Chemical mapping of a 177-nucleotide RNA with DMS and 2A3.
[RMDB]
RNA sequence: GGGAACGACUCGAGUAGAGUCGAAAAGAUAUGGAUCGCCACCGAGCGUAUCUUCAUUCGGAAACGAAUGAAGAAGCUCGUGGUCGAUCCUAAGUCAAACUACAUAGGUGUUCGCACCUAUGUAGAAUCUAUACUCUACGUUCGCGUAGAGUAUAGAAAAAGAAACAACAACAACAAC
Reactivity to DMS in 0.01 (KOAc 150mM, MgCl2 10mM, bicine 150mM(pH8.5), 24C), signal-to-noise 5, nucleotides 027 to 126: g010a050u010a300u010g000g000a020u000c000g010c010c010a020c120c150g030a010g010c000g010u010a100u000c000u010u000c000a010u000u000c000g000g000a150a120a290c000g010a020a000u000g000a010a010g000a020a160g010c000u000c010g020u000g000g000u020c020g010a010u000c000c000u000a010a070g010u000c050a120a090a300c000u000a010c000a010u000a000g010g000u000g010u000u020c280g020c010a020c000c000u000a000u000g010u000a000g000a070a080
Reactivity to 2A3 in 0.01 (KOAc 150mM, MgCl2 10mM, bicine 150mM(pH8.5), 24C), signal-to-noise 4, nucleotides 027 to 126: g030a020u080a020u170g000g000a000u020c000g000c030c010a020c130c200g010a010g010c090g090u300a280u050c000u000u000c000a010u000u020c000g030g000a040a100a100c000g000a000a010u010g010a010a020g000a010a020g020c010u000c010g010u010g000g040u070c030g000a000u020c000c000u000a050a000g010u000c050a080a060a140c000u000a000c010a000u000a000g000g000u030g040u110u120c300g020c120a000c000c000u000a000u010g000u000a000g000a000a000
For 2A3 the reverse transcriptase was SuperScript II with manganese. Conditions: 150 mM KOAc, 10 mM MgCl2 and 150 mM bicine (pH 8.5), 24 C. It was measured as part of the RMDB library TTRDES.